The record gives the reactivity of an RNA of 207 nucleotides to 2A3.
The data come from the RNA Mapping Database (RMDB), library OK3TST.
For 2A3, 521 sequencing reads were counted.
Conditions: 150 mM KOAc, 10 mM MgCl2 and 150 mM bicine (pH 8.5), 24 C.
RNA sequence: GGGAACGACUCGAGUAGAGUCGAAAAUUCCCUAUCGCCGGAACGGAUGAAAGUUCUCCGCAGAGAGAACACGGACAUAGUCGCAACGGGUUAGAAGGAUCGCCGUGACGUUGUCGAGGAACGGGACGGGAAACCCGCUUGAAGGAGGCAGAGGGAGCGAUGCCGAGUGUUUCGACACUCGGCAUCGAAAAGAAACAACAACAACAAC
Reactivity to 2A3 in 0.01 (KOAc 150mM, MgCl2 10mM, bicine 150mM(pH8.5), 24C), signal-to-noise 1, nucleotides 027 to 156: u010u000c000c010c000u010a120u080c050g040c030c010g010g110a110a060c080g050g000a070u090g140a140a040a080g040u010u000c000u000c010c010g300c270a050g200a000g000a000g000a150a010c040a060c040g000g010a010c010a040u030a010g030u030c020g010c090a010a010c030g000g050g030u090u130a100g120a060a060g140g040a050u060c020g040c100c000g010u010g040a000c070g010u110u080g030u160c130g000a040g010g060a000a110c020g000g010g050a040c080g010g000g000a030a030a000c000c030c000g000c020u030u140g010a020a040g050g010a010g000g000c010a000g010a030g020g000g010a000g010